This 177-nucleotide RNA was probed chemically with DMS and 2A3. It was measured as part of the RMDB library OK2TST. The 2A3 profile rests on 1,456 reads.
RNA sequence: GGGAACGACUCGAGUAGAGUCGAAAAACAACAGUAUCUUUGCGCUGCAUUAUCACCUCGACAGCAGACUGCUGAAUGGGCGAAGGUGUUGUAAUGCGCAGUUGCCGGAGGGCGCUGCGCAGUUCAGCGAGUGACGUCAGUUCGCUGACGUCACUCGAAAAGAAACAACAACAACAAC
Reactivity to DMS in 0.01 (KOAc 150mM, MgCl2 10mM, bicine 150mM(pH8.5), 24C), signal-to-noise 1, nucleotides 027 to 126: a060c110a070a050c080a030g000u000a030u000c080u000u000u010g000c030g000c040u000g030c090a080u000u020a110u010c110a030c030c050u010c030g020a230c010a020g000c030a070g020a110c210u010g020c020u000g010a030a110u000g010g000g020c000g010a040a120g030g000u000g030u000u000g030u000a060a110u000g020c000g000c020a000g000u000u010g110c000c010g000g030a110g000g010g030c000g020c000u000g000c000g000c010a030g000u020u000c030a070g030
Reactivity to 2A3 in 0.01 (KOAc 150mM, MgCl2 10mM, bicine 150mM(pH8.5), 24C), signal-to-noise 2, nucleotides 027 to 126: a010c040a000a010c010a040g000u040a060u000c000u020u060u120g020c130g000c080u090g070c020a080u050u070a110u230c030a050c060c010u070c010g070a050c020a020g000c020a040g260a300c110u220g000c010u020g040a060a030u110g000g040g000c040g000a050a000g000g040u010g010u000u060g060u020a160a100u030g000c000g000c010a010g020u130u300g020c000c000g100g120a130g040g010g140c010g060c000u000g000c000g000c000a000g030u060u090c000a010g020